Chemical mapping of a 177-nucleotide RNA with DMS and 2A3. Values are in units of 0.01, from 0 to 300, in steps of 10. Conditions: 150 mM KOAc, 10 mM MgCl2 and 150 mM bicine (pH 8.5), 24 C.
RNA sequence: GGGAACGACUCGAGUAGAGUCGAAAAGGAGGUCCGAUUGAGAAAGUUGCCACCAACAAGAUGUUGCUGAAGAAUGUUUCAGUGGUCGGCUUGCAUUGGGGCGCGUACGCGCAGAACGAGCCGGAGAGAAUUAGAGGUACUUCGGUACCUCUAAUUCAAAAGAAACAACAACAACAAC
Reactivity to DMS in 0.01 (KOAc 150mM, MgCl2 10mM, bicine 150mM(pH8.5), 24C), signal-to-noise 3, nucleotides 027 to 126: g010g020a100g010g010u000c040c050g030a080u000u000g000a100g010a080a090a110g000u000u000g000c020c030a100c110c030a050a090c110a070a080g020a100u010g000u010u000g010c020u000g010a060a090g000a120a120u000g010u000u000u000c020a060g000u010g010g010u010c020g000g010c030u020u010g000c100a140u000u000g010g010g020g000c010g010c020g000u000a030c170g040c020g030c020a080g010a050a130c020g010a030g010c020c010g000g010a060g010a170
Reactivity to 2A3 in 0.01 (KOAc 150mM, MgCl2 10mM, bicine 150mM(pH8.5), 24C), signal-to-noise 1, nucleotides 027 to 126: g000g010a020g000g010u050c030c040g050a020u010u160g090a090g100a050a040a000g060u110u070g050c000c000a010c000c010a010a070c020a040a020g070a080u150g020u090u080g000c040u030g020a040a020g060a160a270u110g080u020u020u010c030a020g020u040g020g060u080c000g000g000c010u000u030g010c040a040u050u100g090g000g060g000c020g000c010g000u070a110c270g010c010g000c040a010g020a070a000c010g000a000g000c010c000g000g000a040g010a000